The record gives the reactivity of an RNA of 177 nucleotides to 2A3 and DMS. For 2A3 the reverse transcriptase was SuperScript II with manganese. DMS adducts were read by reverse transcription with MarathonRT. It was measured as part of the RMDB library OK1LIB. For 2A3, 9,062 sequencing reads were counted. Reactivities are given for positions 27 through 126.
RNA sequence: GGGAACGACUCGAGUAGAGUCGAAAACGAGCAGCGUGAUCGUGCCCGUGAAGCAUGGCAGCGGCAGCAGGCGCGUCGGGAUGAAAAUGAUCGUCGAGACGAAGCAGCGUAUCGAGAAGCCCGGGAUCGUCCCAUAAUAGUUCGCUAUUAUGGGACGAAAAGAAACAACAACAACAAC
Reactivity to 2A3 in 0.01 (KOAc 150mM, MgCl2 10mM, bicine 150mM(pH8.5), 24C), signal-to-noise 6, nucleotides 027 to 126: c030g000a020g050c060a010g000c040g090u070g040a080u070c040g030u060g020c010c000c030g020u070g050a060a020g030c060a060u080g050g000c040a040g000c020g040g000c010a020g000c020a020g070g000c020g000c000g030u030c030g010g040g030a050u090g050a040a060a050a050u210g040a120u050c020g030u020c010g020a020g010a080c040g010a050a020g020c040a010g030c010g040u040a030u100c050g000a050g020a100a020g020c000c000c000g020g020g010a050u020
Reactivity to DMS in 0.01 (KOAc 150mM, MgCl2 10mM, bicine 150mM(pH8.5), 24C), signal-to-noise 3, nucleotides 027 to 126: c040g000a070g020c030a050g010c100g030u000g000a150u020c030g020u030g010c020c000c000g000u050g000a170a170g010c100a080u010g000g010c020a090g000c010g000g000c070a080g030c060a100g000g000c040g000c020g010u020c000g010g000g010a030u000g020a080a060a090a130u110g000a050u010c050g030u000c030g000a220g000a050c040g010a120a130g000c010a110g000c040g000u020a050u020c030g000a070g000a100a120g000c030c010c000g020g000g000a110u040